Overview: This 177-nucleotide RNA was probed chemically with DMS and 2A3. For 2A3, 1,234 sequencing reads were counted. For DMS, 2,766 sequencing reads were counted. The RNA was probed in 150 mM KOAc, 10 mM MgCl2 and 150 mM bicine (pH 8.5) at 24 C. 2A3 adducts were read by reverse transcription with SuperScript II with manganese.

RNA sequence: GGGAACGACUCGAGUAGAGUCGAAAAGCUAUCACUGUUUUAGAAGGGCUUCAAGCCGUUCGUGAGCGUCCUGGAAUGUAUAUAGGAGAUACUGGGAUCACAGGGCUUCAUCACUUAGUGUAUGAGGAACUUAUCACGGGUUCGCCCGUGAUAAGUUAAAAGAAACAACAACAACAAC
Reactivity to DMS in 0.01 (KOAc 150mM, MgCl2 10mM, bicine 150mM(pH8.5), 24C), signal-to-noise 3, nucleotides 027 to 126: g000c050u000a120u010c050a060c050u020g000u010u000u000u000a160g000a050a040g000g010g010c010u010u000c210a080a130g010c010c010g010u000u000c060g020u000g000a050g010c290g010u000c010c030u000g020g000a060a040u010g010u000a040u010a150u000a140g020g020a110g000a080u000a060c050u000g020g040g000a070u000c040a070c050a040g010g020g010c030u000u010c030a020u000c050a040c030u010u010a090g000u000g010u000a060u000g010a070g000g000
Reactivity to 2A3 in 0.01 (KOAc 150mM, MgCl2 10mM, bicine 150mM(pH8.5), 24C), signal-to-noise 2, nucleotides 027 to 126: g020c010u060a060u130c020a030c040u050g170u220u060u000u010a040g010a090a030g060g000g000c010u300u210c130a070a070g010c000c080g120u070u030c030g000u040g060a020g000c060g040u000c000c000u030g060g070a120a070u130g050u170a050u010a010u090a200g150g070a100g050a060u050a090c000u040g040g050g010a010u020c030a000c000a120g000g070g000c000u050u000c000a020u060c000a000c000u060u070a010g040u040g040u030a080u100g010a060g050g080